RNA sequence: GGGAACGACUCGAGUAGAGUCGAAAAGAUAUGGAUAACUUUACUUCGACGAUCCGUAACAUCACUCGGAAACGAGUGUGGGGGAGAAGAAAGGUUAUCCUAAGUCAAAGUUAGGUUCGCCUAACAACUUUAUUAUUGGGUUCGCCCAAUAAUAAAGAAAAGAAACAACAACAACAAC
Reactivity to 2A3 in 0.01 (KOAc 150mM, MgCl2 10mM, bicine 150mM(pH8.5), 24C), signal-to-noise 5, nucleotides 027 to 126: g030a020u080a050u180g010g000a010u010a010a010c000u020u040u140a090c000u010u020c010g300a300c020g010a170u020c030c020g040u160a090a110c050a220u240c010a020c000u000c000g010g040a100a060a050c010g020a010g010u010g000u030g010g020g010g000g000a030g000a000a000g020a040a030a000g040g010u010u000a000u010c010c000u010a080a020g000u000c050a170a080a040g000u000u020a010g010g040u040u090c300g070c050c020u000a000a010c000a000a010
Reactivity to DMS in 0.01 (KOAc 150mM, MgCl2 10mM, bicine 150mM(pH8.5), 24C), signal-to-noise 4, nucleotides 027 to 126: g010a050u010a300u010g000g000a030u010a010a000c010u000u000u010a140c010u000u000c000g000a080c230g000a050u020c000c010g010u000a080a160c150a070u010c010a000c000u000c000g000g010a130a100a150c010g010a010g010u010g030u000g020g000g000g000g010a030g000a020a010g010a050a050a020g000g010u000u000a000u000c000c000u000a010a090g000u000c030a100a120a140g000u000u000a000g000g010u010u010c260g010c000c000u000a000a020c020a100a210
Notes: An RNA of 177 nucleotides, treated with 2A3 and DMS and read out base by base. The DMS profile rests on 4,178 reads. DMS adducts were read by reverse transcription with MarathonRT.